The record gives the reactivity of an RNA of 207 nucleotides to DMS and 2A3.
The DMS profile rests on 3,122 reads.
In probing experiments dimethyl sulfate is read out at A N1 and C N3, which are open when not base-paired.
DMS adducts were read by reverse transcription with MarathonRT.

[RMDB]
RNA sequence: GGGAACGACUCGAGUAGAGUCGAAAAACACCAAAACUGAAAACGGAAGGCAAUCCUACCACGACGAUACUUACUUUCCUUUGAUCGUCGUUACUACUGGCAUAGCCACAAAGGAGAACAAACAUGAGCGCGGACACUGACUUCGGUCAGUGUCCAAGAUGUAGAUGUCGUUCGCGACAUCUACAUCAAAAGAAACAACAACAACAAC
Reactivity to DMS in 0.01 (KOAc 150mM, MgCl2 10mM, bicine 150mM(pH8.5), 24C), signal-to-noise 2, nucleotides 027 to 156: a060c060a250c020c020a050a020a110a220c060u000g030a050a050a080a150c050g000g020a130a040g020g000c080a070a070u000c020c010u010a060c020c070a070c020g000a000c010g010a080u000a060c030u000u000a050c170u020u020u000c070c030u000u000u000g020a050u000c000g020u000c000g010u000u000a090c010u000a070c140u000g030g020c020a190u000a200g030c030c040a040c070a020a060a070g010g020a050g000a080a110c090a030a050a070c060a190u000g010a080g000c100g010c060g000g000a030c000a010c000u000g010a030c010u010u010c300g000g040u010c000a000g050u000g000u000c010c000a000a050
Reactivity to 2A3 in 0.01 (KOAc 150mM, MgCl2 10mM, bicine 150mM(pH8.5), 24C), signal-to-noise 7, nucleotides 027 to 156: a000c070a080c030c050a050a050a030a060c090u130g060a090a050a020a030c080g030g000a040a020g040g010c040a030a080u040c000c020u030a060c010c050a010c010g000a000c000g010a010u090a180c030u070u030a040c020u090u180u100c030c010u070u020u050g020a010u000c000g010u000c000g000u010u050a050c030u020a030c010u000g000g000c070a170u110a110g030c020c000a030c050a020a040a030g060g020a020g030a050a030c050a090a060a020c050a120u180g080a060g080c100g010c060g040g000a000c000a000c000u000g010a010c000u030u070c170g030g000u000c010a000g000u000g000u010c000c000a000a000